[RMDB]
RNA sequence: GGGAACGACUCGAGUAGAGUCGAAAACGAUCCUCGAGAGAGGAUCGACGAGUCUUCGGACUCGAUUACCGCGCCGAUGUGCCGCGGGGCUACGAUGGUAUUGUGGGAAAGAAUACCAUUGUACCUUCUUGUCGUAGCCGAACAACUAGCACGUCUACAUUAGCUAAUUAUUCGUAAUUAGCUAAUGAAAAGAAACAACAACAACAAC
Reactivity to 2A3 in 0.01 (KOAc 150mM, MgCl2 10mM, bicine 150mM(pH8.5), 24C), signal-to-noise 9, nucleotides 027 to 156: c020g000a000u000c000c000u010c010g040a060g000a010g000a000g040g000a000u000c000g000a020c000g000a000g000u000c010u040u130c250g090g000a000c000u000c000g010a050u110u180a080c000c000g000c000g000c030c090g010a010u010g000u010g000c000c000g000c000g030g040g000g000c000u000a000c000g010a010u130g000g000u000a010u010u050g010u010g010g010g060a070a250a110g150a120a080u110a130c000c000a000u000u030g000u000a000c000c000u160u220c110u140u300g040u020c010g000u000a000g000c000c000g010a050a020c050a030a090c040u070a010g000c000a000c000g000u000c010u010a020
Reactivity to DMS in 0.01 (KOAc 150mM, MgCl2 10mM, bicine 150mM(pH8.5), 24C), signal-to-noise 8, nucleotides 027 to 156: c040g020a010u000c000c000u000c010g010a300g000a300g010a010g020g030a000u000c000g020a070c020g010a020g010u000c000u000u000c300g040g010a030c000u010c000g000a100u010u000a270c010c000g020c010g000c020c020g010a020u000g010u000g020c020c010g030c010g020g010g010g030c010u000a020c010g010a050u000g010g020u000a010u000u000g030u000g010g010g000a150a160a220g000a170a130u000a070c000c000a020u000u000g020u000a010c020c020u000u010c110u000u000g020u000c010g020u000a010g000c000c010g000a070a060c090a080a130c130u000a090g000c010a020c020g000u000c000u000a300